[RMDB]
RNA sequence: GGGAACGACUCGAGUAGAGUCGAAAAGCGAACGUUGCCAUGAGACCGUAACUUUCGUAGUCAUUGAUAAAGGGGCAGGUCUCGCUCUUUUGUCAUUGCGGUUGCCUAGAGGCAUGGUCGUUUACCGAAAAGAGCUCAUUCUUCGGAAUGAGCUCAAGAUGCUUUACAACUUCGGUUGUAAAGCAUCAAAAGAAACAACAACAACAAC
Reactivity to 2A3 in 0.01 (KOAc 150mM, MgCl2 10mM, bicine 150mM(pH8.5), 24C), signal-to-noise 4, nucleotides 027 to 156: g010c010g000a020a010c000g070u090u080g000c000c020a090u110g040a060g020a150c000c000g040u050a030a040c040u070u170u170c130g040u040a050g070u090c070a090u060u030g010a000u010a010a010a020g010g010g000g000c030a040g050g220u090c100u080c140g000c010u000c000u000u000u000u010g000u010c000a020u000u040g000c000g000g030u030u040g050c010c010u170a140g020a110g100g000c010a000u030g010g010u000c010g000u020u020u040a080c020c010g020a050a030a040a070g000a000g000c010u000c000a000u010u000c010u030u040c120g040g000a000a010u000g000a000g030c000u000c000a000a000
Reactivity to DMS in 0.01 (KOAc 150mM, MgCl2 10mM, bicine 150mM(pH8.5), 24C), signal-to-noise 2, nucleotides 027 to 156: g000c000g040a080a060c010g030u010u000g010c010c030a170u000g020a200g000a040c000c040g010u000a050a050c020u000u000u000c120g010u000a090g020u010c090a130u000u010g000a030u000a010a040a030g020g030g010g030c000a130g060g020u000c120u000c150g020c000u000c000u000u000u000u000g020u000c010a040u000u000g000c010g040g000u010u010g000c010c070u000a110g000a190g020g000c040a060u000g010g010u000c020g020u000u000u000a110c010c020g010a070a070a110a170g000a020g020c000u020c000a010u000u000c000u020u020c300g050g010a030a020u010g000a000g010c000u020c000a000a030

Conditions: 150 mM KOAc, 10 mM MgCl2 and 150 mM bicine (pH 8.5), 24 C.
Structure probing data (2A3 and DMS) for a 207-nucleotide construct.
The 2A3 profile rests on 3,308 reads.